About this RNA: An RNA of 207 nucleotides, treated with 2A3 and DMS and read out base by base. The data come from the RNA Mapping Database (RMDB), library OK3TST.
RNA sequence: GGGAACGACUCGAGUAGAGUCGAAAAUACGGAAACCAUCCUGCAACUGAGGAUGAGUGCCGUACGGAAACCAUCCCGUACGGAAACCAUCCAGGAGUAUCUGUAUACUACUAGUCGGAUGGGAAAGCAUGCAGACUCUCAACAGGACGUACGGAAAUCAAAAAUACUCGUUCGCGAGUAUUUUUGAAAAAGAAACAACAACAACAAC
Reactivity to 2A3 in 0.01 (KOAc 150mM, MgCl2 10mM, bicine 150mM(pH8.5), 24C), signal-to-noise 4, nucleotides 027 to 156: u170a030c030g010g020a080a060a040c030c010a060u020c000c000u030g060c070a180a090c120u140g040a060g060g010a000u020g050a040g050u020g060c010c010g000u000a010c000g000g030a070a100a100c040c010a060u110c010c000c010g000u000a000c000g010g000a130a020a030c010c000a000u010c000c000a010g030g010a010g000u030a040u020c060u050g060u050a010u020a030c020u020a050c000u020a020g070u080c070g050g030a060u040g050g000g020a020a040a000g010c010a000u040g000c030a010g020a190c000u000c010u020c060a070a130c010a040g000g040a020c030g020u060a030c060g070g040a020a090a070
Reactivity to DMS in 0.01 (KOAc 150mM, MgCl2 10mM, bicine 150mM(pH8.5), 24C), signal-to-noise 1, nucleotides 027 to 156: u000a080c020g020g050a020a070a070c060c030a050u000c000c020u040g000c060a080a210c190u000g030a100g000g000a020u000g010a040g030u000g000c000c080g030u000a030c010g020g000a110a040a160c160c190a220u000c060c000c010g000u000a020c000g010g000a040a040a060c000c020a000u010c050c010a110g030g000a080g050u010a060u000c070u040g030u010a080u000a030c000u000a140c010u000a120g030u000c060g010g010a070u020g030g000g010a000a070a060g000c020a070u010g000c190a090g010a080c010u010c000u000c030a130a100c070a050g010g000a050c020g000u010a030c020g000g000a060a050a130
The reactions ran in a buffer of 150 mM KOAc, 10 mM MgCl2 and 150 mM bicine (pH 8.5), at 24 C.